[RMDB]
RNA sequence: GGGAACGACUCGAGUAGAGUCGAAAAGAUAUGGACUGAAUAGAGCAACAGCUAUUUCAUCGGAAACGAUGAUGUAGACAUGCUCGUUCAGUCCUAAGUCAAACCCCGUCAGUUCGCUGACGGGGAAGCACUAUCCUCAGUUCGCUGAGGAUAGUGCAAAAGAAACAACAACAACAAC
Reactivity to 2A3 in 0.01 (KOAc 150mM, MgCl2 10mM, bicine 150mM(pH8.5), 24C), signal-to-noise 2, nucleotides 027 to 126: g030a000u010a010u020g000g010a000c000u020g000a020a040u240a300g020a030g020c140a120a300c150a260g010c000u000a000u000u020u000c010a000u000c010g030g020a000a000a000c000g000a000u000g000a000u010g000u000a000g040a050c140a300u300g000c000u000c000g000u020u010c000a000g010u000c000c000u000a010a010g000u010c010a000a020a300c000c000c000c000g000u020c010a010g000u030u180c270g000c240u000g000a000c000g010g000g010g020a020a010
Reactivity to DMS in 0.01 (KOAc 150mM, MgCl2 10mM, bicine 150mM(pH8.5), 24C), signal-to-noise 1, nucleotides 027 to 126: g010a010u000a000u000g010g010a040c000u000g000a000a010u000a160g060a000g000c000a170a060c300a190g010c030u010a000u000u000u000c000a000u000c010g020g010a010a020a020c000g010a010u000g000a000u010g000u000a010g040a010c130a120u000g000c000u000c000g000u000u000c000a010g000u000c000c000u010a000a070g000u020c020a170a160a200c010c000c000c010g000u000c000a010g000u000u010c300g070c000u000g000a000c000g000g000g010g030a010a020

Chemical mapping of a 177-nucleotide RNA with 2A3 and DMS. Source: RMDB library TTRDES, as collected in RNAgym. High DMS reactivity at an A or C suggests that its Watson-Crick edge is free. For DMS the reverse transcriptase was MarathonRT.